The record gives the reactivity of an RNA of 177 nucleotides to DMS and 2A3. The reactions ran in a buffer of 150 mM KOAc, 10 mM MgCl2 and 150 mM bicine (pH 8.5), at 24 C. For DMS, 858 sequencing reads were counted. It was measured as part of the RMDB library OK2TRN.
[RMDB]
RNA sequence: GGGAACGACUCGAGUAGAGUCGAAAAAUCAUGAUUGCUAGCAGAGUACUACGUGAACGGUUAACCACGUCAGCGUGCGCGGCCUCUAUCGGCGACGAUAACAUAGUGCAUGGUGUCGUCUCCGACAGGCUGUCGUGGAAUUCGUUCCACGACAGCCAAAAGAAACAACAACAACAAC
Reactivity to DMS in 0.01 (KOAc 150mM, MgCl2 10mM, bicine 150mM(pH8.5), 24C), signal-to-noise 1, nucleotides 027 to 126: a040u000c070a010u000g000a080u010u000g000c000u000a030g000c020a140g000a150g030u000a060c110u000a030c050g050u000g010a110a050c040g000g000u000u000a120a130c100c020a040c020g010u000c020a130g000c030g040u000g100c080g010c070g000g020c050c000u010c070u000a020u000c000g030g020c070g010a080c010g000a020u000a020a050c020a000u000a150g040u000g010c270a020u000g020g000u000g000u000c000g010u010c000u010c020c000g020a050c130a030
Reactivity to 2A3 in 0.01 (KOAc 150mM, MgCl2 10mM, bicine 150mM(pH8.5), 24C), signal-to-noise 1, nucleotides 027 to 126: a010u100c100a050u060g130a100u140u000g030c050u030a070g000c010a020g020a050g110u070a030c010u000a040c000g040u120g040a100a020c010g030g100u160u130a040a090c020c020a020c050g030u040c060a030g000c060g090u060g000c070g000c040g010g040c010c030u110c010u060a040u000c000g040g000c030g000a000c000g020a010u010a070a000c000a040u120a030g220u190g280c110a000u060g000g000u030g020u010c030g030u010c000u000c010c000g000a020c010a010